[RMDB]
RNA sequence: GGGAACGACUCGAGUAGAGUCGAAAAAGUACUUCCCUAUCUCCAGGAGUUCUUCGAGAUACUUCGAGACCUCACCCACCGUGUGUGCCAUGCGGAUACUAUACCGCAGGGUCUCCCUAUUGGGAAGACAGUCUACUCUUUUCGAAGAGUAGACUGUAAAAGAAACAACAACAACAAC
Reactivity to 2A3 in 0.01 (KOAc 150mM, MgCl2 10mM, bicine 150mM(pH8.5), 24C), signal-to-noise 4, nucleotides 027 to 126: a000g090u060a060c030u030u020c020c000c000u010a030u000c050u010c000c040a030g070g020a090g070u080u030c020u080u100c060g130a080g030a210u100a200c030u030u060c030g040a040g000a080c010c020u010c010a050c000c020c010a060c040c070g110u080g020u020g020u030g090c010c010a010u010g010c000g010g020a030u040a120c040u040a060u100a170c020c000g000c000a000g010g020g000u010c010u020c020c000c000u210a220u130u140g010g000g000a000a000g030
Reactivity to DMS in 0.01 (KOAc 150mM, MgCl2 10mM, bicine 150mM(pH8.5), 24C), signal-to-noise 4, nucleotides 027 to 126: a090g010u010a140c070u000u000c000c000c000u000a080u000c020u000c020c080a110g020g010a140g010u010u010c030u000u000c170g000a060g010a090u010a050c070u000u000c030g010a070g000a060c050c010u010c040a130c080c060c040a090c170c120g010u010g020u000g010u000g010c070c090a060u000g010c010g000g000a120u010a110c220u000a100u010a080c000c000g010c000a040g010g010g000u000c020u000c000c020c030u010a120u000u000g000g000g010a050a040g010